This 177-nucleotide RNA was probed chemically with DMS and 2A3. The 2A3 profile rests on 2,744 reads. Values cover nucleotides 27 to 126. DMS adducts were read by reverse transcription with MarathonRT.
[RMDB]
RNA sequence: GGGAACGACUCGAGUAGAGUCGAAAAUCUGCAAUCUUCGGAUUGCAGAAAAUACGGAUCCAUACGGAUCGAUACGGAUCCAUACGGAUCCAUACGGAUCCAAAACGUACCUCUUCGGAGGUACGAAUCUACCUGUAUGCUUCGGCAUACAGGUAGAAAAAGAAACAACAACAACAAC
Reactivity to DMS in 0.01 (KOAc 150mM, MgCl2 10mM, bicine 150mM(pH8.5), 24C), signal-to-noise 2, nucleotides 027 to 126: u020c000u020g000c040a000a000u020c000u010u000c190g020g010a000u000u000g000c000a010g000a000a030a080a090u000a060c130g050g010a040u010c020c000a080u010a020c070g000g000a020u010c020g020a100u010a040c150g010g010a010u010c010c020a120u000a040c130g030g010a000u000c000c000a020u030a000c140g010g010a080u000c040c040a070a070a120a210c040g010u000a010c000c000u000c000u000u010c170g020g000a010g000g010u000a000c000g000a040a040
Reactivity to 2A3 in 0.01 (KOAc 150mM, MgCl2 10mM, bicine 150mM(pH8.5), 24C), signal-to-noise 2, nucleotides 027 to 126: u000c000u000g000c000a010a000u000c000u020u010c110g130g000a000u000u000g000c010a000g010a010a000a000a010u110a020c050g010g030a020u000c010c000a020u040a070c080g040g030a040u050c050g020a020u090a220c120g080g010a020u000c030c000a000u050a040c050g010g010a010u000c000c000a010u090a020c040g060g020a020u000c030c000a030a070a060a000c020g010u000a000c010c000u010c020u050u040c250g130g000a000g000g000u000a000c000g000a000a010